[RMDB]
RNA sequence: GGGAACGACUCGAGUAGAGUCGAAAAAAGGGUGCGCAAGACUGCCAGGUCCCGAAGUGGGAGGUCGACGCCGCCUCUCGGCCGCCAGCUAGACUGGAAUUAGGUCAGCGGAAGAUUAUCGGUGGCCAGACCAAGAUCCUUUCGAGGAUCUUGGUCUAAAAGAAACAACAACAACAAC
Reactivity to 2A3 in 0.01 (KOAc 150mM, MgCl2 10mM, bicine 150mM(pH8.5), 24C), signal-to-noise 2, nucleotides 027 to 126: a000a000g170g000g000u070g000c120g000c070a010a080g040a060c000u070g040c010c030a080g030g030u040c000c020c010g080a190a080g160u300g010g000g000a010g000g010u020c030g030a030c050g010c000c000g010c020c000u060c010u050c030g000g000c000c000g060c020c020a010g030c000u030a100g010a030c010u000g000g130a160a250u190u170a090g000g010u000c000a010g000c000g170g000a100a040g070a200u140u090a070u250c080g030g030u020g040g060c000c000
Reactivity to DMS in 0.01 (KOAc 150mM, MgCl2 10mM, bicine 150mM(pH8.5), 24C), signal-to-noise 1, nucleotides 027 to 126: a020a010g050g000g060u000g010c010g030c120a070a270g010a040c140u020g000c050c040a220g030g000u000c000c010c020g000a160a060g020u020g000g020g010a060g010g000u000c010g000a080c110g000c060c000g010c010c000u010c060u000c020g050g010c070c000g000c020c020a200g020c020u000a050g000a130c010u030g020g000a220a160u030u060a120g020g000u000c020a080g010c040g000g010a130a080g010a080u050u000a050u020c120g000g010u000g000g000c000c020

Structure probing data (2A3 and DMS) for a 177-nucleotide construct.
The RNA was probed in 150 mM KOAc, 10 mM MgCl2 and 150 mM bicine (pH 8.5) at 24 C.
2A3 adducts were read by reverse transcription with SuperScript II with manganese.
The 2A3 profile rests on 834 reads.
Values are in units of 0.01, from 0 to 300, in steps of 10.
For DMS, 1,497 sequencing reads were counted.